[RMDB]
RNA sequence: GGGAACGACUCGAGUAGAGUCGAAAAGAUAUGGAAUCUGUAGGGAGCGAAACCAUCGGAAACGAUGGCACUCGCGAGGAUCUACUUCCUAAGUCAAAACCGGACGAGUCUUCGGACUCGUCCGGAAGUUAUCAAAUCUCUUCGGAGAUUUGAUAACAAAAGAAACAACAACAACAAC
Reactivity to DMS in 0.01 (KOAc 150mM, MgCl2 10mM, bicine 150mM(pH8.5), 24C), signal-to-noise 1, nucleotides 027 to 126: g010a030u000a020u020g000g000a030a020u000c250u020g010u000a000g000g010g000a010g030c000g000a020a190a300c000c000a000u000c000g010g000a030a030a050c000g000a010u010g000g020c050a020c220u000c000g040c000g000a060g030g000a050u010c010u010a010c000u000u000c000c000u010a000a190g000u000c000a100a050a150a220c010c000g000g000a010c000g010a020g020u010c000u000u020c190g030g000a010c000u000c000g000u010c020c030g000g010a000a010
Reactivity to 2A3 in 0.01 (KOAc 150mM, MgCl2 10mM, bicine 150mM(pH8.5), 24C), signal-to-noise 1, nucleotides 027 to 126: g010a000u030a010u040g000g000a060a050u160c100u300g000u000a030g000g000g000a010g020c010g000a080a020a010c010c010a000u000c000g050g000a020a020a000c000g000a010u000g040g000c020a030c180u050c000g000c010g060a230g000g040a000u000c020u000a030c000u030u010c000c000u010a030a010g000u010c020a010a010a150a150c000c000g080g000a000c030g060a000g020u000c070u140u300c300g160g020a010c030u000c010g000u020c000c020g010g000a010a000
This 177-nucleotide RNA was probed chemically with DMS and 2A3. The data come from the RNA Mapping Database (RMDB), library TTRDEL. Conditions: 150 mM KOAc, 10 mM MgCl2 and 150 mM bicine (pH 8.5), 24 C. For DMS, 1,118 sequencing reads were counted.